[RMDB]
RNA sequence: GGGAACGACUCGAGUAGAGUCGAAAAGAUCCGACAUGCAACGUGAUGUACGAUAUUGGAUCCGAUGUAGACGAUAUCGAGCUGGACACGUCGUUCAUGGUCGAUCCAAGUACGAUGACGGAGGAAAUCCUGGUCAGGCAUUCGUGCCUGACCAGGAAAAAGAAACAACAACAACAAC
Reactivity to DMS in 0.01 (KOAc 150mM, MgCl2 10mM, bicine 150mM(pH8.5), 24C), signal-to-noise 1, nucleotides 027 to 126: g010a130u000c010c000g030a150c080a060u010g000c120a030a150c070g020u000g020a160u000g000u000a130c020g000a120u000a170u000u000g010g020a080u030c100c070g000a150u000g000u000a120g000a030c000g030a010u000a050u000c030g000a300g030c110u010g000g000a080c080a040c060g000u020c020g000u010u000c010a030u030g030g030u010c040g000a000u000c020c000a020a000g080u030a060c090g040a050u000g000a100c070g010g010a160g030g010a120a110a160
Reactivity to 2A3 in 0.01 (KOAc 150mM, MgCl2 10mM, bicine 150mM(pH8.5), 24C), signal-to-noise 1, nucleotides 027 to 126: g030a060u060c020c040g000a020c010a080u090g000c050a080a060c030g090u080g100a170u180g020u090a030c080g060a120u040a020u050u060g070g000a010u000c040c130g020a040u210g070u070a020g010a000c000g000a040u030a010u100c020g010a040g100c070u060g000g040a010c010a010c040g040u060c070g000u100u070c040a040u080g020g010u030c040g020a080u080c010c010a020a090g050u040a010c030g020a090u030g000a020c080g000g050a040g070g080a020a060a080